[RMDB]
RNA sequence: GGGAACGACUCGAGUAGAGUCGAAAAGAAUAAGUGGGAGGCUCUGCCGUCUGUGAAAUACCACUACUCUCAAUGUUGUUUUACUUAUACCAUGAUGUAGCAUCUGUGUGGCCUCGCGGUCGCUCAGCCAGAGCGAUCACUUCGGUGAUCGCUCUGGAAAAGAAACAACAACAACAAC
Reactivity to 2A3 in 0.01 (KOAc 150mM, MgCl2 10mM, bicine 150mM(pH8.5), 24C), signal-to-noise 1, nucleotides 027 to 126: g090a000a000u190a010a040g000u060g000g020g020a070g000g210c040u010c070u270g050c060c300g030u030c070u120g070u000g060a000a120a120u100a130c000c000a030c000u070a030c180u160c000u000c000a000a000u090g000u070u000g010u000u040u000u090a010c000u070u090a010u000a040c100c010a210u240g060a300u190g250u300a000g190c000a000u020c020u070g070u100g070u070g020g000c000c000u040c070g060c000g000g000u000c000g000c000u000c000a000g000
The record gives the reactivity of an RNA of 177 nucleotides to 2A3. Reactivities are given for positions 27 through 126.